[RMDB]
RNA sequence: GGGAACGACUCGAGUAGAGUCGAAAAGCUUAACCAGGACAAGAUCUCCUUCUCUCCAACGUUGUUGCCAACUCAUGAUUCUCCUAACCUGUGCUUGGAGAGACGUGGACCCAGAGUCAGAGGACCUUACUCAUUAAUAGUUCGCUAUUAAUGAGUAAAAAGAAACAACAACAACAAC
Reactivity to 2A3 in 0.01 (KOAc 150mM, MgCl2 10mM, bicine 150mM(pH8.5), 24C), signal-to-noise 2, nucleotides 027 to 126: g000c010u070u070a060a010c010c010a030g030g040a010c020a040a070g030a150u000c020u030c020c000u020u000c020u010c000u000c020c000a070a040c080g050u020u060g070u080u060g050c030c020a040a040c050u030c050a090u090g060a120u110u020c020u030c030c020u040a110a100c020c050u080g060u110g080c070u030u040g040g010a020g010a010g000a000c020g030u040g020g020a040c010c010c010a030g010a020g040u020c030a010g010a020g050g040a020c010c000u000
Reactivity to DMS in 0.01 (KOAc 150mM, MgCl2 10mM, bicine 150mM(pH8.5), 24C), signal-to-noise 6, nucleotides 027 to 126: g020c070u000u000a120a110c060c040a070g010g010a090c080a080a070g000a140u000c040u010c030c010u000u000c020u010c030u000c010c020a050a070c200g000u000u010g010u010u010g000c060c050a060a140c070u010c050a050u000g010a110u010u000c040u000c030c050u010a070a100c090c090u000g000u010g010c100u010u000g010g000a050g010a030g010a040c190g020u010g010g000a090c040c020c030a090g010a080g020u000c030a080g010a110g010g010a100c090c080u000

Record summary: Structure probing data (2A3 and DMS) for a 177-nucleotide construct. The data come from the RNA Mapping Database (RMDB), library RFMREP. High 2A3 reactivity points to a flexible backbone, as in loops and unpaired stretches. In probing experiments dimethyl sulfate is read out at A N1 and C N3, which are open when not base-paired.